An RNA of 177 nucleotides, treated with DMS and 2A3 and read out base by base. For 2A3 the reverse transcriptase was SuperScript II with manganese. The 2A3 profile rests on 11,949 reads. The reactions ran in a buffer of 150 mM KOAc, 10 mM MgCl2 and 150 mM bicine (pH 8.5), at 24 C. Values cover nucleotides 27 to 126. DMS adducts were read by reverse transcription with MarathonRT.
RNA sequence: GGGAACGACUCGAGUAGAGUCGAAAACUACCAGCGAUUUAGGUAGUCUCAUUGAUUGUAAUGCGGCUUCAGUUAACCAAAUUGUCUUGCGUAAUUCUAAUGGUGCUUGCAUUUGGAACGCUGCUGCGACAAUAUUACUCUUCGGAGUAAUAUUGUCAAAAGAAACAACAACAACAAC
Reactivity to DMS in 0.01 (KOAc 150mM, MgCl2 10mM, bicine 150mM(pH8.5), 24C), signal-to-noise 7, nucleotides 027 to 126: c030u000a030c050c000a120g010c210g010a140u010u010u010a100g000g000u000a010g000u000c020u000c030a100u010u010g010a140u010u000g010u010a070a060u010g010c030g010g010c010u000u000c040a080g020u000u000a120a180c010c000a010a010a020u000u000g010u010c010u000u000g010c030g020u000a080a060u010u010c190u010a110a080u010g020g000u010g000c010u000u000g000c010a050u000u000u000g010g010a070a080c060g010c010u000g000c040u000g010c100
Reactivity to 2A3 in 0.01 (KOAc 150mM, MgCl2 10mM, bicine 150mM(pH8.5), 24C), signal-to-noise 9, nucleotides 027 to 126: c010u010a020c000c010a020g090c080g180a140u080u080u270a080g000g010u010a010g040u000c010u000c010a100u100u120g150a130u080u140g080u210a100a090u160g010c010g010g010c000u050u040c060a110g020u040u060a090a070c000c000a020a000a010u070u070g070u060c010u010u010g000c010g050u060a080a110u170u060c070u160a190a080u170g130g000u100g040c010u000u010g000c000a010u000u000u010g000g000a030a010c010g000c010u010g000c010u020g010c010